Background: Chemical mapping of a 177-nucleotide RNA with DMS and 2A3. For DMS the reverse transcriptase was MarathonRT. For 2A3, 2,224 sequencing reads were counted.
[RMDB]
RNA sequence: GGGAACGACUCGAGUAGAGUCGAAAAGACGAUCGAGAUCCUGCGGCGCGAUCGCCUCGACGCACAUGCGGCGCAGAUGGGGGCGCUGCUCGUCGAUGGCUUGCGGGAGAUCGCACGUGCGCAUCCACUAUGCACUGGACUUCGGUCCAGUGCAUAGAAAAGAAACAACAACAACAAC
Reactivity to DMS in 0.01 (KOAc 150mM, MgCl2 10mM, bicine 150mM(pH8.5), 24C), signal-to-noise 1, nucleotides 027 to 126: g020a080c010g000a110u000c010g000a030g010a170u000c020c000u000g000c030g000g000c100g020c030g000a060u000c100g030c010c030u000c030g000a020c040g000c300a160c260a100u000g020c000g010g000c000g010c020a100g000a120u020g000g000g000g000g000c020g010c020u000g030c000u000c000g030u000c000g000a010u000g020g020c020u000u020g010c030g020g010g000a090g000a110u010c000g000c060a060c050g020u000g000c020g020c190a130u000c030c050a220
Reactivity to 2A3 in 0.01 (KOAc 150mM, MgCl2 10mM, bicine 150mM(pH8.5), 24C), signal-to-noise 2, nucleotides 027 to 126: g060a030c050g070a200u040c010g000a000g000a050u000c010c010u010g000c000g090g000c080g020c060g140a100u100c070g000c020c020u020c000g000a000c010g000c000a080c020a230u140g010c000g000g000c010g000c010a050g040a240u220g050g000g050g000g010c000g000c000u000g010c000u000c020g020u000c000g000a030u190g060g000c050u060u140g000c020g010g010g000a040g000a010u010c010g030c030a040c000g070u140g070c000g000c020a030u010c010c010a030